[RMDB]
Annotation:
The record gives the reactivity of an RNA of 170 nucleotides to 2A3 and DMS. Values are in units of 0.01, from 0 to 300, in steps of 10. For 2A3, 5,537 sequencing reads were counted. For DMS, 8,447 sequencing reads were counted. Reactivities are given for positions 27 through 129.
RNA sequence: GGGAACGACUCGAGUAGAGUCGAAAAUCAGCUUAUAGGGCGAAUUCCUUUGAUGUACCUACAUUCUGCGCAAACCGUUCUGCAAUGUGUAAUUGGUGCUUGAUUAGCCAAGAUUCCAUAACUCACUGAAACUGUCGCUUCGGCGACAGUAAAAGAAACAACAACAACAAC
Reactivity to 2A3 in 0.01 (KOAc 150mM, MgCl2 10mM, bicine 150mM(pH8.5), 24C), signal-to-noise 4, nucleotides 027 to 129: u040c010a010g040c010u040u080a020u100a160g040g020g010c030g020a000a010u090u070c000c000u030u030u210g080a090u110g000u040a020c000c020u040a020c010a050u060u030c000u100g030c020g000c050a030a100a020c020c030g010u090u060c030u030g070c020a040a080u090g030u000g000u050a050a140u060u110g030g010u070g040c000u000u000g070a070u060u030a060g040c000c000a010a010g030a130u090u000c020c020a050u070a050a070c000u020c070a050c020u040g030a120a110
Reactivity to DMS in 0.01 (KOAc 150mM, MgCl2 10mM, bicine 150mM(pH8.5), 24C), signal-to-noise 2, nucleotides 027 to 129: u040c010a100g030c030u020u010a000u130a120g070g000g000c060g000a080a080u050u050c030c090u020u030u060g010a140u000g040u010a040c100c020u010a040c080a290u000u000c060u070g020c110g000c070a050a070a060c080c100g020u020u010c010u010g000c000a030a080u000g010u000g000u020a020a140u010u000g020g040u050g030c000u030u080g050a100u050u020a140g020c030c070a020a040g020a150u010u050c030c050a060u060a000a000c070u060c030a050c070u020g030a070a120